[RMDB]
RNA sequence: GGGAACGACUCGAGUAGAGUCGAAAAGGCGGGUCUCUUGUACAUUUCUGCAAACGGUAAACAAGGCGCAAACAUCGAGACAAGGCGCGGAAAUAAGAAACUUUAGUCAAAGCAUGUAUGCGUAACACGCUUAUACGCUGUUCGCAGCGUAUAAGCGAAAAGAAACAACAACAACAAC
Reactivity to DMS in 0.01 (KOAc 150mM, MgCl2 10mM, bicine 150mM(pH8.5), 24C), signal-to-noise 1, nucleotides 027 to 126: g030g000c000g020g040g000u030c020u010c000u050u050g010u000a000c120a050u000u000u000c090u000g000c080a030a020a060c100g000g020u000a020a050a080c020a080a080g050g000c010g070c090a030a020a050c060a000u050c030g000a250g000a050c010a150a000g000g000c070g000c060g000g000a050a080a150u000a000a010g000a040a070a050c020u010u000u000a080g010u010c050a050a140a110g020c120a000u000g010u050a080u020g000c040g000u000a070a040c300a080
An RNA of 177 nucleotides, treated with DMS and read out base by base. Source: RMDB library OK1LIB, as collected in RNAgym.